[RMDB]
RNA sequence: GGGAACGACUCGAGUAGAGUCGAAAAGGCGGCCGUGAGACCAUUGUCGCCGAAUGCGGGUUAUGCAGUGGGCGUUUGAGCACAUAAUGGUGGAAGGCACCGGCCGGCGACAGGCUAUCUCGCAUUAGCCCGAAUGGUGGUUCGCCAUCGUUCGGGCAAAAGAAACAACAACAACAAC
Reactivity to 2A3 in 0.01 (KOAc 150mM, MgCl2 10mM, bicine 150mM(pH8.5), 24C), signal-to-noise 9, nucleotides 027 to 126: g030g010c010g010g010c010c020g030u030g020a130g060a070c080c030a050u010u040g010u000c010g000c000c000g000a020a010u030g020c010g000g030g010u080u070a060u210g020c020a050g130u090g010g100g040c040g020u040u110u230g090a090g020c040a050c030a090u230a140a090u150g030g020u040g040g090a150a090g130g010c010a010c010c000g020g020c000c000g000g000c000g010a010c010a010g010g010c010u030a020u030c010u010c010g000c010a040u050u130a030
Reactivity to DMS in 0.01 (KOAc 150mM, MgCl2 10mM, bicine 150mM(pH8.5), 24C), signal-to-noise 9, nucleotides 027 to 126: g010g020c030g000g000c010c040g000u000g000a180g030a130c140c030a070u030u000g000u000c020g010c000c000g010a040a020u020g010c010g000g000g000u020u010a040u030g010c030a050g010u010g000g000g010c010g010u020u030u030g020a140g040c030a080c130a090u030a080a070u030g010g020u000g000g020a120a140g000g010c010a070c020c020g000g000c030c000g000g010c020g000a050c040a050g000g000c050u010a070u010c020u000c010g000c040a060u020u010a150
About this RNA: An RNA of 177 nucleotides, treated with 2A3 and DMS and read out base by base. Source: RMDB library OK1LIB, as collected in RNAgym. The DMS profile rests on 49,326 reads. The 2A3 profile rests on 40,197 reads. Conditions: 150 mM KOAc, 10 mM MgCl2 and 150 mM bicine (pH 8.5), 24 C.